[RMDB]
RNA sequence: GGGAACGACUCGAGUAGAGUCGAAAAGUUACUGGCAGCAAACACAUAAAGCGCGACCUUCAACGAAGAAGGCUGCACUUCCCGAUAGAACGGGACCUGGACAAAGGCGUCCUCGCUAGGUGACUAGAGCCAUCCUUUGCUUCGGCAAAGGAUGGCUAAAAGAAACAACAACAACAAC
Reactivity to 2A3 in 0.01 (KOAc 150mM, MgCl2 10mM, bicine 150mM(pH8.5), 24C), signal-to-noise 1, nucleotides 027 to 126: g210u100u210a010c000u000g000g000c060a000g050c000a000a240a000c000a070c000a270u210a120a190a000g000c000g090c010g190a300c000c000u030u000c040a170a090c070g140a000a300g040a000a010g100g000c150u090g000c000a000c000u150u000c040c020c000g070a060u000a030g240a000a080c000g000g000g000a000c000c000u000g000g000a030c100a010a040a000g000g040c140g100u000c000c000u100c060g000c010u000a000g000g000u000g030a030c010u060a000g000
Source: RMDB library RFM100, as collected in RNAgym. Structure probing data (2A3) for a 177-nucleotide construct. For 2A3 the reverse transcriptase was SuperScript II with manganese. Conditions: 150 mM KOAc, 10 mM MgCl2 and 150 mM bicine (pH 8.5), 24 C.